[RMDB]
RNA sequence: GGGAACGACUCGAGUAGAGUCGAAAAAACGUUGCAUGAUCGUAAAACAUGCCCGGCUUACCGUGAGCCGCCUUUGAAAGAAACGUUUACACGGACUCUGUUGCGUUACGCACGUACCUAACUUGUGAAAACGGCAUCUUGUUCGCAAGAUGCCGAAUCGUGUACUAAGGUUCGCCUUAGUACACGAAAAAGAAACAACAACAACAAC
Reactivity to 2A3 in 0.01 (KOAc 150mM, MgCl2 10mM, bicine 150mM(pH8.5), 24C), signal-to-noise 5, nucleotides 027 to 156: a000a000c000g000u000u000g000c000a000u000g010a060u170c030g090u220a010a270a000a000c000a000u000g000c010c010c000g010g010c000u010u090a060c000c000g010u000g000a000g000c010c020g040c000c030u190u090u080g110a080a080a040g050a000a050a000c050g060u070u150u130a010c020a000c010g050g020a090c050u090c090u190g070u070u050g020c020g030u030u060a040c160g000c050a020c010g020u030a050c000c050u060a120a210c030u130u070g040u040g190a050a030a030a040c000g010g000c000a000u010c000u010u010g010u040u040c080g010c110a000a000g000a000u000g010c000c000g000a000a000
Reactivity to DMS in 0.01 (KOAc 150mM, MgCl2 10mM, bicine 150mM(pH8.5), 24C), signal-to-noise 2, nucleotides 027 to 156: a000a030c020g020u020u000g020c020a030u010g000a130u000c070g040u000a060a090a050a130c040a060u000g020c020c110c010g030g030c020u010u000a060c100c160g000u000g020a040g020c020c010g020c050c010u000u000u000g000a140a100a140g010a120a020a020c050g000u020u010u000a130c070a150c040g050g010a130c070u000c040u000g000u000u010g020c020g040u000u010a070c070g020c040a070c070g040u000a070c030c030u000a050a050c090u010u010g010u000g000a030a050a060a150c010g000g010c010a000u000c010u000u000g010u000u000c300g000c000a020a000g000a020u010g020c000c000g020a000a020
The data come from the RNA Mapping Database (RMDB), library M2RFOK. This 207-nucleotide RNA was probed chemically with 2A3 and DMS. Values cover nucleotides 27 to 156. For 2A3 the reverse transcriptase was SuperScript II with manganese.